The data come from the RNA Mapping Database (RMDB), library TTRINS.
Chemical mapping of a 177-nucleotide RNA with 2A3 and DMS.
Reactivities are given for positions 27 through 126.
For 2A3 the reverse transcriptase was SuperScript II with manganese.
The DMS profile rests on 2,043 reads.
[RMDB]
RNA sequence: GGGAACGACUCGAGUAGAGUCGAAAAGAUAUGGAACCUGUAGAGAGGUGGUGAAGAAGAUUAAGUACAUCGGAAACGAUGUACUUAAUUGUAAAGCCACUACCCACCUCUACUGGUUCCUAAGUCAGUGUAAUAGCAAGUUCGCUUGCUAUUACACAAAAGAAACAACAACAACAAC
Reactivity to 2A3 in 0.01 (KOAc 150mM, MgCl2 10mM, bicine 150mM(pH8.5), 24C), signal-to-noise 1, nucleotides 027 to 126: g030a020u060a050u150g020g000a000a000c000c000u000g020u020a010g010a000g000a010g000g050u040g010g010u040g030a210a110g050a070a010g000a180u000u000a010a000g010u000a010c000a000u020c000g030g000a050a060a030c010g000a000u020g000u030a000c000u000u000a000a000u000u000g000u010a000a000a000g000c000c010a000c000u010a020c050c010c000a090c010c000u010c000u000a000c000u010g010g000u000u000c000c000u010a100a010g060u030c080a030
Reactivity to DMS in 0.01 (KOAc 150mM, MgCl2 10mM, bicine 150mM(pH8.5), 24C), signal-to-noise 4, nucleotides 027 to 126: g000a030u000a300u040g000g000a020a000c000c000u000g000u000a000g020a010g000a140g030g000u000g000g000u000g020a090a110g010a240a300g000a000u000u010a000a000g010u010a030c000a020u000c000g000g000a060a110a140c000g010a020u010g010u000a000c000u000u000a000a000u000u000g010u000a010a160a300g010c020c000a000c040u000a030c070c040c170a300c050c020u000c000u020a010c000u000g000g030u000u000c000c000u000a020a040g020u000c070a160